An RNA of 177 nucleotides, treated with 2A3 and DMS and read out base by base.
RNA sequence: GGGAACGACUCGAGUAGAGUCGAAAAAAGAUAUGGAUUCGUAAGUCGCUUGGAUUUACACAGGGGAGUAUGUCGGAAACGACAUAUGAAAGACUGUGUUGUCAGCGAUAUCGAAUCCUAAGUCAAACGUUAUAGAUCCCUUCGGGGAUCUAUAACGAAAAGAAACAACAACAACAAC
Reactivity to 2A3 in 0.01 (KOAc 150mM, MgCl2 10mM, bicine 150mM(pH8.5), 24C), signal-to-noise 1, nucleotides 027 to 126: a000a000g040a020u080a010u170g000g000a000u000u020c020g000u080a300a290g100u030c000g030c090u170u270g200g050a120u300u290u180a030c030a010c010a030g000g040g000g010a060g010u010a020u010g010u020c030g010g070a000a080a080c000g050a000c010a010u030a020u010g090a110a090a000g270a080c000u010g000u010g000u000u010g070u000c010a000g010c010g000a020u030a030u020c000g010a000a010u000c000c000u020a050a010g090u010c000a140a060a150
Reactivity to DMS in 0.01 (KOAc 150mM, MgCl2 10mM, bicine 150mM(pH8.5), 24C), signal-to-noise 1, nucleotides 027 to 126: a110a180g000a070u000a300u030g010g020a010u000u000c010g040u000a080a300g040u010c000g030c000u000u000g050g000a030u000u000u000a000c000a000c010a000g010g000g000g030a300g000u000a000u010g000u010c000g000g000a140a100a230c000g030a000c000a010u020a000u000g000a300a110a180g000a100c020u000g000u030g020u000u000g010u000c030a000g030c000g000a000u000a150u010c000g000a050a000u000c000c000u000a010a030g020u000c040a130a110a300
It was measured as part of the RMDB library TTRDES.